[RMDB]
RNA sequence: GGGAACGACUCGAGUAGAGUCGAAAAGUUAGUUCGCUAACAGGUCACCGUAGGCAGGCUACCCACCUCGAUGCUUCGAAGAACGGUCGUUCGAAAGAGCGACCGGGAGAAGUCAUCGAGAGGCCUGCCUAAACGGCAGUACUGGCUUCGGCCAGAAAGACCUAUAGCUAUUCGUAGCUAUAGGUCUAAAAGAAACAACAACAACAAC
Reactivity to 2A3 in 0.01 (KOAc 150mM, MgCl2 10mM, bicine 150mM(pH8.5), 24C), signal-to-noise 1, nucleotides 027 to 156: g010u020u050a010g020u070u110c150g020c090u020a040a000c010a070g120g150u120c080a040c060c000g000u000a000g000g010c000a000g020g000c050u120a210c030c000c020a080c000c000u020c000g040a010u010g000c000u010u000c000g130a180a050g000a010a000c000g000g000u000c000g010u000u000c000g010a060a110a020g000a000g000c000g000a000c000c000g000g010g010a030g010a000a030g090u160c020a010u000c000g000a000g000a000g010g000c000c000u020g000c000c010u010a010a000a000c010g000g000c040a020g060u110a190c000u030g000g030c000u080u000c170g280g000c000c000a000g040a100a030
Reactivity to DMS in 0.01 (KOAc 150mM, MgCl2 10mM, bicine 150mM(pH8.5), 24C), signal-to-noise 2, nucleotides 027 to 156: g000u000u000a100g000u010u000c150g000c030u010a050a110c070a090g030g020u000c070a040c000c000g000u010a030g020g020c000a010g010g000c000u000a000c000c020c060a300c150c010u010c000g020a020u000g010c010u000u000c010g050a120a230g000a110a230c030g020g000u000c010g040u000u000c020g020a150a090a270g000a020g000c020g030a010c000c000g000g020g000a150g000a010a020g030u010c020a000u000c010g000a010g000a090g020g010c000c000u010g030c000c010u010a000a010a020c030g000g050c040a080g000u000a180c000u000g010g000c010u000u010c300g000g020c000c020a050g020a080a210
Description
The record gives the reactivity of an RNA of 207 nucleotides to 2A3 and DMS. The 2A3 profile rests on 884 reads. The RNA was probed in 150 mM KOAc, 10 mM MgCl2 and 150 mM bicine (pH 8.5) at 24 C. 2A3 adducts were read by reverse transcription with SuperScript II with manganese. It was measured as part of the RMDB library RNAMAK.